[RMDB]
RNA sequence: GGGAACGACUCGAGUAGAGUCGAAAAAAAAAUAACUAGCAUGCAUAAGACGAGGUAGAGCGCGCGCUCUACCAAAAGAUGUGUGUAAAAGCGCACGUGUAGGCGCGCAUACACGAAUUAACAAAAAGAAUGAACAUUUGUUCGCAAAUGUUCAUUCAAAAGAAACAACAACAACAAC
Reactivity to DMS in 0.01 (KOAc 150mM, MgCl2 10mM, bicine 150mM(pH8.5), 24C), signal-to-noise 2, nucleotides 027 to 126: a000a050a100a080a070u000a050a040c050u010a100g000c040a000u000g000c030a050u000a090a080g010a090c120g000a190g010g010u010a010g010a040g000c090g070c300g000c240g000c000u000c000u000a000c010c010a000a010a010a030g010a050u000g020u000g040u010g010u010a020a050a090a090g000c060g010c070a020c040g040u000g020u010a060g000g030c010g000c030g000c040a070u000a000c000a000c000g000a160a080u010u010a010a050c120a030a060a030a100a110
Reactivity to 2A3 in 0.01 (KOAc 150mM, MgCl2 10mM, bicine 150mM(pH8.5), 24C), signal-to-noise 1, nucleotides 027 to 126: a020a010a000a000a000u140a040a000c040u040a030g020c000a010u000g000c040a010u040a120a090g090a120c060g060a050g000g000u030a010g000a030g000c110g000c050g060c100g020c110u050c000u000a010c000c000a000a030a000a000g040a030u040g020u000g000u000g010u050a020a090a100a050g030c060g020c030a040c140g050u010g020u100a050g080g040c040g000c040g000c060a020u000a040c020a000c000g030a040a070u190u130a110a010c050a030a080a000a000a030
Source information
The data come from the RNA Mapping Database (RMDB), library M2PK90. This 177-nucleotide RNA was probed chemically with DMS and 2A3. The 2A3 profile rests on 1,279 reads. DMS adducts were read by reverse transcription with MarathonRT. Values cover nucleotides 27 to 126.